[RMDB]
RNA sequence: GGGAACGACUCGAGUAGAGUCGAAAAUUUCCAGCCCCUUCUCCCCCCCUUUCAUCCUCCAAGAACCAUUGUAAAACUCGCAGUGACAAAGAGAGUGGGUAGGGUUUGAGGCCCCUGUUCCUGAGGAGGGCUGUACUAAAUUCGUUUAGUACAGCCCAAAAGAAACAACAACAACAAC
Reactivity to DMS in 0.01 (KOAc 150mM, MgCl2 10mM, bicine 150mM(pH8.5), 24C), signal-to-noise 2, nucleotides 027 to 126: u020u010u020c000c000a150g000c020c000c000c050u010u010c010u010c000c000c000c000c010c010c010u010u010u000c100a120u010c050c020u000c010c050a050a100g000a100a050c060c010a090u020u040g040u010a090a070a110a040c070u000c050g020c040a070g010u020g020a050c160a030a070a120g010a040g000a050g030u000g000g000g040u010a070g010g030g000u000u000u000g010a150g020g050c070c010c000c000u010g000u000u010c010c010u000g010a110g010g000a300
Reactivity to 2A3 in 0.01 (KOAc 150mM, MgCl2 10mM, bicine 150mM(pH8.5), 24C), signal-to-noise 2, nucleotides 027 to 126: u030u020u000c030c000a000g010c000c000c000c000u080u000c040u060c020c000c000c000c000c010c010u030u060u060c050a060u010c010c020u000c020c010a060a020g030a040a020c030c010a060u040u060g020u090a050a030a050a100c010u020c030g000c020a040g030u020g040a080c030a030a080a000g140a010g010a000g040u080g000g010g020u050a110g030g000g010u020u030u150g050a030g030g020c000c000c000c010u000g020u020u030c000c010u010g050a040g080g050a060
An RNA of 177 nucleotides, treated with DMS and 2A3 and read out base by base. For 2A3 the reverse transcriptase was SuperScript II with manganese. For DMS, 3,033 sequencing reads were counted. The RNA was probed in 150 mM KOAc, 10 mM MgCl2 and 150 mM bicine (pH 8.5) at 24 C.